[RMDB]
RNA sequence: GGGAACGACUCGAGUAGAGUCGAAAAGCGAAGGCUCAGAUCUCCUGGUCACUAGAAUGGAGGGAUCCGCAUGAGGCUGGUUUUACAGAGCAGUGAACACUUCCUUCUCUUGACAGUGGAGGGAUCAACCCCAUACUAGGUUCGCCUAGUAUGGGGUAAAAGAAACAACAACAACAAC
Reactivity to DMS in 0.01 (KOAc 150mM, MgCl2 10mM, bicine 150mM(pH8.5), 24C), signal-to-noise 4, nucleotides 027 to 126: g010c020g000a120a070g010g000c000u000c090a090g000a070u020c010u010c020c020u050g010g010u000c020a040c020u000a030g000a040a050u040g000g010a040g020g000g010a100u010c120c170g000c040a080u000g030a120g010g000c000u010g010g000u020u040u030u020a070c050a020g000a050g010c040a140g010u000g000a070a090c260a190c050u000u000c010c020u000u010c000u000c040u000u010g020a030c060a080g020u020g000g010a070g000g000g000a050u030c090a140
Reactivity to 2A3 in 0.01 (KOAc 150mM, MgCl2 10mM, bicine 150mM(pH8.5), 24C), signal-to-noise 7, nucleotides 027 to 126: g070c060g070a100a030g130g010c010u020c080a030g010a050u010c000u010c010c000u050g040g020u020c020a010c030u010a030g050a080a050u220g050g030a010g000g030g020a080u050c040c060g000c100a110u060g020a030g110g050c010u010g050g020u050u130u060u160a080c030a010g050a010g040c050a030g030u030g090a070a030c060a030c130u020u010c000c000u000u020c000u000c000u010u040g010a020c010a090g110u080g110g050a080g040g020g000a010u030c020a020
Source: RMDB libraries RFM100 and RFMREP, as collected in RNAgym. An RNA of 177 nucleotides, treated with DMS and 2A3 and read out base by base. Conditions: 150 mM KOAc, 10 mM MgCl2 and 150 mM bicine (pH 8.5), 24 C.